RNA sequence: GGGAACGACUCGAGUAGAGUCGAAAAACGAGCGCGUCACUACGGUGGCGCGCUCGAUGGAAGUAGAGACCAGUAACUACUCAAAUAAACGGGUAUAACUAAAAAACCUUAAGAGUAAGGUGUAAAAAAUACGCGUUCUAGUUCGCUAGAACGCGAAGAUCACAUGAUAGUUCGCUAUCAUGUGAUCAAAAGAAACAACAACAACAAC
Reactivity to 2A3 in 0.01 (KOAc 150mM, MgCl2 10mM, bicine 150mM(pH8.5), 24C), signal-to-noise 2, nucleotides 027 to 156: a000c000g000a000g000c000g020c050g000u010c020a000c030u020a020c160g130g000u000g000g010c000g000c010g020c000u000c000g000a000u000g030g050a070a020g000u050a010g000a010g000a080c000c010a030g000u060a120a000c010u010a000c010u000c190a010a030a080u200a030a010a030c060g010g010g010u180a150u050a090a070c090u190a020a020a070a070a050a050c000c000u050u010a080a010g080a010g250u040a010a000g000g000u020g040u100a010a150a070a000a000a000u180a080c050g000c000g000u000u000c000u000a000g030u050u060c130g000c130u000a000g000a000a000c000g000c000g000a010a000
Chemical mapping of a 207-nucleotide RNA with 2A3. Values are in units of 0.01, from 0 to 300, in steps of 10. The RNA was probed in 150 mM KOAc, 10 mM MgCl2 and 150 mM bicine (pH 8.5) at 24 C. Source: RMDB library M2RFPK, as collected in RNAgym.